[RMDB]
RNA sequence: GGGAACGACUCGAGUAGAGUCGAAAACAAGCGUGCACGUGCUUCGCGUGCGAAGAAGAAGGAGACUCAAUGAAGAUCACCCGAGUCAAGAGUCUCGACAAGUUCAUCCGUGUGUCUGAUCGAAUGAUUGGGCCGAAGGUGCUUGUCGCUGACAUCGGCACUCCUCCGAGUUCGCUCGGAGGAGUGCAAAAGAAACAACAACAACAAC
Reactivity to 2A3 in 0.01 (KOAc 150mM, MgCl2 10mM, bicine 150mM(pH8.5), 24C), signal-to-noise 1, nucleotides 027 to 156: c050a050a110g110c030g050u050g030c010a000c020g010u040g030c230u210u210c240g020c000g000u010g010c050g000a000a030g000a030a010g030a080a030g040g070a100g020a020c010u030c050a000a170u220g060a030a030g010a010u090c020a060c020c010c000g050a020g020u010c030a040a030g050a000g050u000c000u000c030g000a000c010a010a010g030u280u300c090a130u000c020c010g110u150g030u040g000u120c010u020g020a000u010c000g160a120a240u300g000a000u000u020g010g000g000c000c090g080a060a070g060g010u010g020c000u000u000g000u000c000g020c100u020g000a010c010a090u080c030g000
Background: Chemical mapping of a 207-nucleotide RNA with 2A3. The RNA was probed in 150 mM KOAc, 10 mM MgCl2 and 150 mM bicine (pH 8.5) at 24 C. High 2A3 reactivity points to a flexible backbone, as in loops and unpaired stretches. It was measured as part of the RMDB library OK3TST.